[RMDB]
RNA sequence: GGGAACGACUCGAGUAGAGUCGAAAAGUGACACUGUUCGCAGUGUCACAAAGUGGUGGAUCUAGAACCACAAUAACUAGAUCAAAGAUCUAGUCUAGUUCAAAAGCAUACAGUUCGCUGUAUGCAACAGUAGUACCGCGUUCGCGCGGUACUACUGAAAAGAAACAACAACAACAAC
Reactivity to 2A3 in 0.01 (KOAc 150mM, MgCl2 10mM, bicine 150mM(pH8.5), 24C), signal-to-noise 1, nucleotides 027 to 126: g000u010g010a020c000a000c000u020g010u080u120c170g000c100a010g010u000g000u010c000a030c010a030a010a000g010u010g010g010u030g030g010a090u030c030u080a090g020a080a020c020c000a000c070a020a000u120a010a000c000u000a000g000a000u020c040a130a290a090g030a010u000c020u010a010g000u000c040u050a100g020u020u140c100a080a020a040a050g010c010a000u000a000c010a000g020u000u120c170g030c060u000g000u010a000u000g020c000a010a000
Reactivity to DMS in 0.01 (KOAc 150mM, MgCl2 10mM, bicine 150mM(pH8.5), 24C), signal-to-noise 1, nucleotides 027 to 126: g050u000g000a010c000a010c000u000g000u000u000c200g010c020a040g070u000g000u000c000a000c000a010a130a250g000u000g000g000u010g010g010a220u000c060u010a080g010a120a020c010c010a010c080a070a080u010a010a040c000u000a030g010a000u000c000a130a110a110g000a110u010c040u000a020g000u010c080u000a130g020u000u000c220a000a120a190a130g010c000a010u000a000c000a000g000u010u000c280g110c010u010g010u000a000u020g010c000a010a070
Chemical mapping of a 177-nucleotide RNA with 2A3 and DMS. DMS adducts were read by reverse transcription with MarathonRT. The RNA was probed in 150 mM KOAc, 10 mM MgCl2 and 150 mM bicine (pH 8.5) at 24 C. 2A3 adducts were read by reverse transcription with SuperScript II with manganese.